The record gives the reactivity of an RNA of 207 nucleotides to 2A3.
RNA sequence: GGGAACGACUCGAGUAGAGUCGAAAACGCCGAGAUUCGUCUCGGCGAAAAAGCGUACUACUAAAUCUCUAGCGUGGCGCCUGAGUAUCCCAAAUAGGAUACGCGGGAACUACGCUCGGGUUUAGUAUCGCAAAAAAUGCUCGUUUCGACGAGCAAACUACCCAUUAGUCUUCGGACUAAUGGGUAGAAAAGAAACAACAACAACAAC
Reactivity to 2A3 in 0.01 (KOAc 150mM, MgCl2 10mM, bicine 150mM(pH8.5), 24C), signal-to-noise 2, nucleotides 027 to 156: c000g050c000c000g000a000g010a010u040u110c080g100u020c140u010c010g000g000c000g000a020a000a000a000a000g040c040g030u080a100c070u000a000c010u010a030a020a090u180c150u020c010u140a000g000c010g000u000g010g030c020g020c010c000u010g010a000g010u000a000u000c000c000c050a230a250a130u300a100g000g000a000u000a000c000g010c000g040g020g000a030a020c000u010a000c010g000c000u000c010g000g010g000u000u000u000a000g000u000a000u040c010g000c030a060a060a090a000a000a000u110g000c000u000c010g060u040u150u070c260g090a010c000g000a000g000c000a000a010a010
Source information
For 2A3 the reverse transcriptase was SuperScript II with manganese. Values cover nucleotides 27 to 156. It was measured as part of the RMDB library RNAMAK. Conditions: 150 mM KOAc, 10 mM MgCl2 and 150 mM bicine (pH 8.5), 24 C.